Record summary
The record gives the reactivity of an RNA of 177 nucleotides to DMS and 2A3. The DMS profile rests on 1,081 reads. DMS adducts were read by reverse transcription with MarathonRT. Conditions: 150 mM KOAc, 10 mM MgCl2 and 150 mM bicine (pH 8.5), 24 C.
RNA sequence: GGGAACGACUCGAGUAGAGUCGAAAAGAUAUGGAUUUAUCAUGGGAGCUCUGUCGGAAACGACUGAGCGAAGAACAUGUAAGAAUCCUAAGUCAAACUGAAUAUCGGGUUCGCCCGAUAUUCAGAAGAUAACAGGAGACUUCGGUCUCCUGUUAUCAAAAGAAACAACAACAACAAC
Reactivity to DMS in 0.01 (KOAc 150mM, MgCl2 10mM, bicine 150mM(pH8.5), 24C), signal-to-noise 2, nucleotides 027 to 126: g030a020u000a300u020g010g000a020u000u000u010a230u060c000a020u020g010g000g020a280g020c000u000c000u010g010u010c000g000g020a120a070a300c000g030a000c010u010g000a030g050c010g020a020a100g010a120a180c010a000u000g000u000a150a290g000a000a000u000c010c000u000a040a110g010u030c010a040a210a250c000u000g000a000a000u000a000u000c000g010g000g000u000u010c300g010c000c000c000g000a000u000a000u000u010c010a000g020a060a110
Reactivity to 2A3 in 0.01 (KOAc 150mM, MgCl2 10mM, bicine 150mM(pH8.5), 24C), signal-to-noise 1, nucleotides 027 to 126: g010a020u050a030u170g000g020a030u030u010u010a160u140c000a000u020g090g000g070a010g000c020u020c000u020g010u000c000g030g030a070a110a000c020g000a010c000u020g000a010g030c030g040a010a010g000a020a000c000a010u000g050u090a300a270g020a110a020u010c000c010u010a130a030g040u050c040a010a030a180c010u010g000a000a000u010a010u000c000g000g060g080u030u040c270g170c030c010c030g000a020u000a000u020u030c020a010g010a010a020